[RMDB]
RNA sequence: GGGAACGACUCGAGUAGAGUCGAAAACGACCGCAGUUCGCUGCGGUCGAAAAGAACUGACUACCGUUCGCCUAGCCGGUGUCACUUUAAGGGCGGAGAUUAAAACCCUGACGUUCGCGUCAGGGAACACUAAACAGGACUUCGGUCCUGUUUAGUGAAAAGAAACAACAACAACAAC
Reactivity to 2A3 in 0.01 (KOAc 150mM, MgCl2 10mM, bicine 150mM(pH8.5), 24C), signal-to-noise 3, nucleotides 027 to 126: c010g010a000c000c010g040c000a000g030u070u110c160g030c060u010g010c040g000g010u010c000g000a000a010a000a010g030a060a010c060u060g100a040c040u080a090c070c020g050u050u090c030g020c030c030u050a040g060c020c010g020g010u030g010u060c040a050c100u160u200u110a070a090g030g030g000c040g080g030a080g010a040u110u210a010a030a100a180c000c000c010u000g000a000c010g040u050u050c290g000c000g080u000c010a000g000g020g000a000a010
Reactivity to DMS in 0.01 (KOAc 150mM, MgCl2 10mM, bicine 150mM(pH8.5), 24C), signal-to-noise 2, nucleotides 027 to 126: c030g010a000c010c000g040c010a020g010u000u030c180g020c030u020g040c000g010g020u000c010g000a010a030a090a140g000a050a080c060u000g020a050c030u000a060c030c030g020u000u000c050g000c070c010u010a110g000c100c030g000g010u000g000u010c040a040c110u000u010u000a090a090g010g000g020c060g020g010a070g000a130u000u010a010a070a090a150c010c000c000u010g010a020c000g030u010u020c210g010c010g020u000c000a000g000g000g010a010a020